Chemical mapping of a 177-nucleotide RNA with 2A3 and DMS. DMS adducts were read by reverse transcription with MarathonRT. The 2A3 profile rests on 1,207 reads.

RNA sequence: GGGAACGACUCGAGUAGAGUCGAAAAGAAAAGUGUGACGUGGAAGUGUCAGGAUCAUUGUGUAACAUGGAGCAUCCUUUUCCGCUGAUAAAGUUAUUGCACAAUUGAGUCUGCUUGCGCAGAUAUACUGCUAGGAGGGAUUCGUCCCUCCUAGCAGAAAAGAAACAACAACAACAAC
Reactivity to 2A3 in 0.01 (KOAc 150mM, MgCl2 10mM, bicine 150mM(pH8.5), 24C), signal-to-noise 2, nucleotides 027 to 126: g080a000a030a050a030g110u120g000u000g020a000c070g020u030g000g110a000a040g040u100g070u140c020a020g070g000a060u070c070a050u050u020g030u020g030u130a060a000c010a060u180g080g020a030g030c070a220u040c030c030u000u020u070u060c040c050g020c000u040g000a090u120a100a050a000g010u060u150a040u090u140g000c000a010c030a080a090u020u080g000a000g070u000c000u030g000c020u220u220g020c070g000c000a000g050a000u000a000u060a030
Reactivity to DMS in 0.01 (KOAc 150mM, MgCl2 10mM, bicine 150mM(pH8.5), 24C), signal-to-noise 2, nucleotides 027 to 126: g030a060a110a060a030g110u010g070u000g000a090c080g030u000g000g000a050a240g020u000g020u050c050a200g000g000a180u030c010a050u000u000g050u000g000u010a090a010c110a070u010g030g000a110g000c120a020u050c010c000u000u000u000u020c040c060g000c040u000g000a100u000a090a120a150g000u020u000a110u000u000g000c050a110c010a010a060u010u000g000a090g000u000c000u000g000c030u010u040g040c170g010c030a010g000a050u000a080u020a110